[RMDB]
RNA sequence: GGGAACGACUCGAGUAGAGUCGAAAAUGUAAACUAGUAUCAUUGCAAGAUCGUCAUUUUGUUGAAUGAUUCCCCCAAUUGUCGCGUUGAUACUUGCCAACGUCUGUGGGCUAACUUGAUAUGACUCGAAAGUGUUACUGUUCGCAGUAACACUUUCAAAAGAAACAACAACAACAAC
Reactivity to 2A3 in 0.01 (KOAc 150mM, MgCl2 10mM, bicine 150mM(pH8.5), 24C), signal-to-noise 1, nucleotides 027 to 126: u150g010u080a020a080a180c020u020a020g000u000a010u010c000a030u060u150g050c020a010a050g000a120u040c070g080u010c060a000u000u100u130u230g250u080u210g070a040a000u060g050a060u220u250c040c010c020c060c020a030a020u040u130g150u080c010g000c020g030u000u010g050a050u060a140c000u030u020g020c000c010a010a000c030g030u020c020u000g050u040g020g000g010c010u000a040a000c020u000u040g000a010u000a000u230g050a000c050u000c050
Reactivity to DMS in 0.01 (KOAc 150mM, MgCl2 10mM, bicine 150mM(pH8.5), 24C), signal-to-noise 4, nucleotides 027 to 126: u000g010u010a050a100a190c110u010a030g010u000a030u000c010a030u000u010g000c020a100a160g010a030u000c180g020u020c030a050u000u000u000u010g010u000u000g000a050a010u000g010a070u010u000c020c010c000c060c020a110a080u000u000g000u000c230g000c060g010u000u000g010a040u010a020c060u000u000g010c010c020a080a060c090g020u010c070u020g030u010g000g000g020c060u000a040a060c110u000u000g010a070u000a080u010g010a050c100u010c170